[RMDB]
RNA sequence: GGGAACGACUCGAGUAGAGUCGAAAAACUCAUGGCACGAGACAUGAGUGGUACUACGAUCCGAGUACCUAGACUAGCUAGCUAGGAUCCUGCUAGGUCAUGCUAGCGUGCUCUAGCGCUGAUCGCGCAGCUAGGGCUAGUUCGCUAGCCCUAGCUGAAAAGAAACAACAACAACAAC
Reactivity to 2A3 in 0.01 (KOAc 150mM, MgCl2 10mM, bicine 150mM(pH8.5), 24C), signal-to-noise 3, nucleotides 027 to 126: a000c000u000c000a000u000g000g000c050a000c270g250a200g030a160c040a000u000g010a010g030u020g010g000u060a030c040u010a050c030g060a060u000c040c020g020a000g030u010a040c030c020u010a030g020a090c010u020a080g000c020u020a000g000c010u070a090g260g000a040u070c010c050u140g140c060u140a040g040g000u050c040a040u120g030c010u000a010g000c000g010u030g010c020u030c010u020a020g000c040g000c050u060g060a130u050c050g000c030g010
Reactivity to DMS in 0.01 (KOAc 150mM, MgCl2 10mM, bicine 150mM(pH8.5), 24C), signal-to-noise 5, nucleotides 027 to 126: a020c000u000c000a000u000g000g000c020a210c230g000a120g000a050c000a000u000g010a020g020u000g020g010u000a050c030u010a080c100g000a060u000c020c080g010a030g020u000a060c080c010u000a060g000a060c030u000a100g030c020u010a040g000c010u000a130g000g000a040u000c060c060u010g010c140u010a060g010g000u000c170a080u000g010c000u000a000g010c020g020u000g000c160u000c010u000a010g010c050g020c040u000g000a050u010c090g000c150g020
Overview: Chemical mapping of a 177-nucleotide RNA with 2A3 and DMS. The 2A3 profile rests on 3,924 reads. For DMS, 5,429 sequencing reads were counted. For DMS the reverse transcriptase was MarathonRT. Values cover nucleotides 27 to 126. The data come from the RNA Mapping Database (RMDB), library OK2TRN.